The record gives the reactivity of an RNA of 177 nucleotides to DMS and 2A3. The data come from the RNA Mapping Database (RMDB), library OK2TST. The DMS profile rests on 1,195 reads.
[RMDB]
RNA sequence: GGGAACGACUCGAGUAGAGUCGAAAAUGAUGGCGGAGCUGCGUCCAAGCAUUUUCAUACUCACUUUGAAGGAGCUGAAAAAGAAGAAAUCUAUAUCACAGAACUGGAAGAAGCAUUCGAUUGUGAACGAGUCAGUAGGAUUCGUCCUACUGACUCGAAAAGAAACAACAACAACAAC
Reactivity to DMS in 0.01 (KOAc 150mM, MgCl2 10mM, bicine 150mM(pH8.5), 24C), signal-to-noise 2, nucleotides 027 to 126: u010g000a050u000g000g010c060g020g020a170g010c130u000g000c070g010u010c030c020a060a160g020c020a050u000u000u000u010c010a100u020a120c010u000c050a110c040u010u000u010g000a180a120g020g000a020g020c190u000g000a060a040a030a110a070g030a070a170g000a060a080a050u000c050u000a090u020a070u010c050a040c100a090g000a070a050c070u030g020g000a070a050g010a110a100g010c070a090u010u010c070g010a050u000u010g020u000g020a090a170
Reactivity to 2A3 in 0.01 (KOAc 150mM, MgCl2 10mM, bicine 150mM(pH8.5), 24C), signal-to-noise 2, nucleotides 027 to 126: u080g010a020u070g040g030c020g020g100a090g120c120u050g040c070g030u000c040c030a070a000g000c000a030u000u050u000u010c010a020u050a120c030u020c030a080c070u090u070u140g020a080a020g030g030a010g060c020u050g020a030a030a020a020a000g080a050a000g000a020a100a000u030c070u080a080u010a020u210c040a050c060a120g060a100a080c050u080g000g000a110a100g000a050a000g080c010a040u050u080c050g100a100u080u130g080u040g060a060a040